[RMDB]
RNA sequence: GGGAACGACUCGAGUAGAGUCGAAAAAGGCCAACGCCCAUAAUGCGUGCACUGGCGCGACAUCCGACGCCAUUCAUGGCCAUGUCAAUGAUUUUCUGGUGCGUACCGGGCUGAGAGGCGGUGUAAGCGUCCUUGUUUCAUUCGUGAAACAAGGACGAAAAGAAACAACAACAACAAC
Reactivity to 2A3 in 0.01 (KOAc 150mM, MgCl2 10mM, bicine 150mM(pH8.5), 24C), signal-to-noise 2, nucleotides 027 to 126: a020g070g000c020c030a000a000c050g020c000c000c000a020u180a080a070u150g040c050g000u030g010c010a010c110u010g020g000c030g000c030g070a030c030a060u060c100c030g070a100c020g000c020c000a050u090u060c040a050u090g050g010c020c020a020u140g030u000c020a050a130u130g090a140u110u060u150u030c040u040g030g000u040g010c000g000u010a060c030c040g000g000g000c010u050g020a070g010a040g120g000c030g000g020u060g030u080a050a020g060
Reactivity to DMS in 0.01 (KOAc 150mM, MgCl2 10mM, bicine 150mM(pH8.5), 24C), signal-to-noise 4, nucleotides 027 to 126: a100g010g010c000c010a140a140c170g000c020c010c060a090u000a090a110u010g010c040g000u010g000c060a090c090u010g020g000c120g020c080g000a100c090a070u000c100c040g030a110c090g000c000c010a040u010u000c140a100u000g010g000c040c100a050u000g000u010c070a140a090u020g010a140u000u020u010u000c030u010g010g020u000g000c050g000u010a070c100c080g010g000g000c040u000g020a100g020a150g030g000c050g020g020u010g010u010a070a080g000